[RMDB]
RNA sequence: GGGAACGACUCGAGUAGAGUCGAAAAGCUAUGGUGCAACUCUUUAAGGCAAUAACGAACUAAUUCUAAGCAAGUAAUGGAGAAAUGCCAGGGUCACUAUCUAGCCAUAACAGUGCUUGACAGUAUGAGAAUCUGCUACCCUUCGGGGUAGCAGAAAGGUAGUAAACAGGUUCGCCUGUUUACUACCAAAAGAAACAACAACAACAAC
Reactivity to 2A3 in 0.01 (KOAc 150mM, MgCl2 10mM, bicine 150mM(pH8.5), 24C), signal-to-noise 4, nucleotides 027 to 156: g020c030u040a010u080g020g000u010g030c030a030a050c030u030c030u110u150u150a120a070g020g030c030a100a110u130a120a070c080g040a050a020c030u070a050a060u110u020c030u090a020a070g050c050a110a040g010u100a070a090u180g080g020a130g040a110a080a010u070g000c000c000a000g000g000g040u020c000a000c010u020a050u070c050u030a010g020c000c000a020u040a080a040c030a080g040u030g110c030u040u050g040a070c020a050g090u060a100u080g090a110g040a110a150u000c000u000g000c000u000a000c000c000c000u000u040c180g050g000g000g010u000a000g010c000a000g000a000a000a000
Reactivity to DMS in 0.01 (KOAc 150mM, MgCl2 10mM, bicine 150mM(pH8.5), 24C), signal-to-noise 3, nucleotides 027 to 156: g010c010u000a030u000g030g020u010g000c030a090a050c030u020c020u000u000u000a120a110g020g020c020a090a120u010a110a150c040g000a140a110c070u000a050a110u000u000c040u000a090a160g030c100a110a180g010u000a040a120u000g020g010a110g010a060a080a090u000g020c020c000a130g030g000g020u000c030a020c010u010a050u000c040u000a070g030c000c030a110u000a050a090c090a100g020u010g010c020u000u000g010a160c040a060g000u010a070u010g000a180g000a050a120u000c000u000g010c000u000a030c000c000c000u010u000c300g030g000g030g020u000a000g000c000a000g000a010a000a010